[RMDB]
RNA sequence: GGGAACGACUCGAGUAGAGUCGAAAAUUGCGCCUCCGAUUCGCCGUCGGGAUUUCCCCAGCAGCCAUGACCUACCAGGCUGCGGUGCGGCUCGCCGCACAGGUCAUCCCUCAUCGGGCGCGUCCUGGAUAGGGCUAUACUUUCGAGUAUAGCCCAAUCACACUUACACUUUCGAGUGUAAGUGUGAAAAAGAAACAACAACAACAAC
Reactivity to DMS in 0.01 (KOAc 150mM, MgCl2 10mM, bicine 150mM(pH8.5), 24C), signal-to-noise 1, nucleotides 027 to 156: u000u000g030c000g020c080c020u000c020c000g000a050u000u000c080g020c150c060g000u000c170g030g000g000a180u000u010u000c030c020c100c080a080g010c020a050g030c000c000a140u020g000a170c060c060u000a180c100c030a200g000g050c050u000g040c010g050g030u000g020c000g020g060c090u010c250g030c000c000g000c000a020c010a070g010g040u000c060a080u010c000c030c000u000c090a080u000c100g020g020g040c020g000c010g030u000c020c010u010g000g000a130u000a110g020g040g030c000u000a000u000a000c000u000u000u010c230g030a070g020u000a020u000a000g010c000c000c020a000a020
Reactivity to 2A3 in 0.01 (KOAc 150mM, MgCl2 10mM, bicine 150mM(pH8.5), 24C), signal-to-noise 3, nucleotides 027 to 156: u180u150g010c030g000c030c010u120c060c070g020a020u100u090c120g050c190c100g160u110c060g000g010g000a000u020u000u010c010c040c030c010a020g010c000a000g000c020c000a170u130g090a280c000c080u090a170c160c040a030g000g000c000u000g010c000g000g000u000g020c020g010g000c070u100c130g130c000c000g000c030a010c000a010g000g010u030c000a020u000c000c030c000u040c030a020u030c000g000g000g000c000g010c020g000u010c000c020u010g160g020a160u160a260g030g000g000c000u000a000u010a000c010u080u070u130c240g080a010g010u010a000u000a000g000c000c000c010a000a000